[RMDB]
RNA sequence: GGGAACGACUCGAGUAGAGUCGAAAAGCAAAUAUUGUCUUAAUUACUUAGGCUAAAAGAAAUAAGUAUUAAAGCGGGACAAGGCAUCGACAUUUGAUACAAAUAUUGAUCAAUUGAUGUCUUAUUUAAACCUCAUCCGGCUUCGGCCGGAUGAGAACUAACACGAUCACUUCGGUGAUCGUGUUAGAAAAGAAACAACAACAACAAC
Reactivity to 2A3 in 0.01 (KOAc 150mM, MgCl2 10mM, bicine 150mM(pH8.5), 24C), signal-to-noise 1, nucleotides 027 to 156: g050c030a080a060a080u140a130u130u130g070u040c020u040u060a080a100u140u050a090c000u060u080a030g050g030c020u180a280a070a000a000g020a010a040a020u050a020a020g020u010a010u070u130a150a130a000g100c080g010g000g110a050c010a080a010g000g010c000a000u000c000g020a020c000a120u070u080u060g020a040u260a080c060a000a190a030u270a220u290u140g020a000u000c010a000a000u030u010g000a000u000g010u000c010u000u000a030u000u100u030a060a080a030c010c000u000c010a030u000c000c020g000g000c010u040u140c150g080g020c020c020g000g000a000u000g000a000g000a000a000